An RNA of 207 nucleotides, treated with 2A3 and read out base by base. It was measured as part of the RMDB library RNAMAK. For 2A3 the reverse transcriptase was SuperScript II with manganese. Conditions: 150 mM KOAc, 10 mM MgCl2 and 150 mM bicine (pH 8.5), 24 C.

RNA sequence: GGGAACGACUCGAGUAGAGUCGAAAAGCGCAGUUCGCUGCGCGCUACGUCCUAAGUCUCAUCGGGAGUUUGGGAGCAGAUACUCGGAAACGAGUACCUGCGACGAUCAAACUUCUCUAGCGUGUGAGAUAUGGAAAUAAUAUCAGUUCGCUGAUAAGUUCAAUCUAGACUUCGGUCUAGAUUGAACAAAAGAAACAACAACAACAAC
Reactivity to 2A3 in 0.01 (KOAc 150mM, MgCl2 10mM, bicine 150mM(pH8.5), 24C), signal-to-noise 3, nucleotides 027 to 156: g000c000g000c000a000g020u060u150c200g050c130u000g000c000g010c000g000c040u080a080c070g060u000c000c000u040a130a040g020u000c000u000c020a030u060c030g030g030g010a000g000u020u010u010g020g000g000a010g000c000a000g010a010u020a010c000u020c010g000g030a090a110a030c020g000a000g000u000a010c010c010u000g000c000g030a060c020g000a010u060c000a010a010a000c000u110u110c050u020c020u030a070g090c090g080u200g020u000g040a010g000a010u040a050u060g020g080a000a030a130u260a090a020u040a090u040c000a010g070u070u090c170g100c140u020g030a030u130a140a100